RNA sequence: GGGAACGACUCGAGUAGAGUCGAAAAUGGCCGACGGCGUGUACAACGGCCGUCGGAUCACGUCGCCGGAGGCCCUGCUCCCCGUCUACACGCCGCAGGUGAUCUCUCGACACCCGGUGUCACCGAGCACGUCUCAUGCAUUCGUGCAUGAGACGUGAAAAGAAACAACAACAACAAC
Reactivity to 2A3 in 0.01 (KOAc 150mM, MgCl2 10mM, bicine 150mM(pH8.5), 24C), signal-to-noise 1, nucleotides 027 to 126: u030g060g000c020c000g040a000c030g000g050c110g020u130g000u130a150c170a210a050c220g100g090c030c000g050u000c010g020g010a000u010c000a000c020g030u020c000g110c070c000g000g000a030g010g010c030c000c030u010g060c020u070c000c050c000c010g010u000c070u070a060c100a010c090g080c020c000g010c040a010g000g000u000g050a140u010c030u000c010u000c000g020a000c010a020c040c010c000g000g020u000g000u000c020a010c040c010g010a030g020
Reactivity to DMS in 0.01 (KOAc 150mM, MgCl2 10mM, bicine 150mM(pH8.5), 24C), signal-to-noise 1, nucleotides 027 to 126: u000g010g010c000c000g020a080c000g000g020c010g000u030g000u000a120c220a190a040c020g020g000c030c040g020u000c000g010g000a040u000c030a060c140g040u000c020g000c080c080g000g000a130g010g000c050c020c010u000g010c040u020c020c050c070c030g010u010c150u020a060c090a050c010g010c020c090g000c060a030g000g020u000g000a090u010c040u000c030u000c030g000a090c030a100c020c010c000g000g010u010g010u010c050a080c040c070g010a090g010